[RMDB]
RNA sequence: GGGAACGACUCGAGUAGAGUCGAAAAGCUUCUGCCGGAUUGCAUACGGCGAUGUCACCGCCAUUCCACCGAUGCGCCGUAACUCCACCAUCAUCGCAAGAAGCGCCUGCGCCCUCUGGCGUUGAGACAUCUGCGACAGCGACCGGCCGCUGACUCGUAACGAUAACAGUUUCGACUGUUAUCGUUAAAAAGAAACAACAACAACAAC
Reactivity to 2A3 in 0.01 (KOAc 150mM, MgCl2 10mM, bicine 150mM(pH8.5), 24C), signal-to-noise 6, nucleotides 027 to 156: g000c010u030u020c040u140g010c010c000g080g010a180u050u140g020c060a060u060a100c030g030g000c020g080a130u090g040u070c050a070c100c050g070c100c020a140u180u090c070c050a110c060c090g050a050u070g020c010g000c010c010g000u020a060a110c050u030c050c040a080c050c010a130u130c020a050u070c050g000c040a080a080g030a040a010g080c030g020c040c000u020g000c030g020c000c030c000u140c160u200g010g020c030g010u050u090g030a060g010a060c010a060u030c070u120g000c010g010a010c020a020g000c000g020a020c000c010g000g000c000c000g000c000u010g020a060c030u000c040g040
Reactivity to DMS in 0.01 (KOAc 150mM, MgCl2 10mM, bicine 150mM(pH8.5), 24C), signal-to-noise 3, nucleotides 027 to 156: g010c020u000u000c030u000g020c000c000g030g010a200u000u000g030c060a300u000a080c020g020g040c000g020a070u000g020u000c030a090c020c030g030c030c020a210u000u000c060c070a130c040c010g020a050u010g010c050g030c010c040g050u000a030a100c040u050c040c030a060c030c040a120u000c070a090u010c040g000c010a040a090g000a130a030g020c020g020c020c040u010g020c010g000c010c000c060u000c160u000g000g020c000g010u000u010g010a190g020a110c070a140u010c040u000g020c000g000a100c030a090g000c010g010a130c020c000g000g010c020c040g000c010u010g000a120c080u000c040g000

The record gives the reactivity of an RNA of 207 nucleotides to 2A3 and DMS.